Chemical mapping of a 177-nucleotide RNA with 2A3 and DMS. The RNA was probed in 150 mM KOAc, 10 mM MgCl2 and 150 mM bicine (pH 8.5) at 24 C.
RNA sequence: GGGAACGACUCGAGUAGAGUCGAAAAAAAGGAUAAACAGGCUGAGAAAGAAAUUGGGGAAGCAACACCUUUCAUAAUAGUCACAAAUAAUAUAAAAUGCCUUGGUGUGACUCUAACUAAGGAAGGACUUUUAUUAUCCUUUCGAGGAUAAUAAAAGAAAAGAAACAACAACAACAAC
Reactivity to 2A3 in 0.01 (KOAc 150mM, MgCl2 10mM, bicine 150mM(pH8.5), 24C), signal-to-noise 1, nucleotides 027 to 126: a010a000a050g150g010a050u150a060a100a060c030a030g030g000c040u050g040a020g080a130a120a010g050a020a210a020u120u100g010g000g020g000a090a010g090c020a010a010c020a050c000c010u050u050u100c050a070u080a300a040u070a090g000u020c000a000c030a040a190a040u240a260a000u140a050u020a160a180a030a170u100g030c020c000u020u030g080g000u030g000u000g060a030c000u020c010u060a060a070c020u060a100a050g060g000a010a020g060g010a050
Reactivity to DMS in 0.01 (KOAc 150mM, MgCl2 10mM, bicine 150mM(pH8.5), 24C), signal-to-noise 2, nucleotides 027 to 126: a060a040a030g000g000a070u040a050a100a140c090a030g000g020c050u010g010a090g020a080a100a110g000a050a050a070u010u000g010g000g000g030a070a050g020c100a040a050c110a120c040c010u010u010u010c010a060u000a070a030u020a020g000u000c000a010c010a050a060a040u020a050a070u020a130u020a100a050a110a070u000g000c030c040u000u000g000g000u000g000u000g000a020c020u000c210u010a070a040c100u010a050a070g000g000a050a040g020g000a210
Source information: For 2A3, 930 sequencing reads were counted.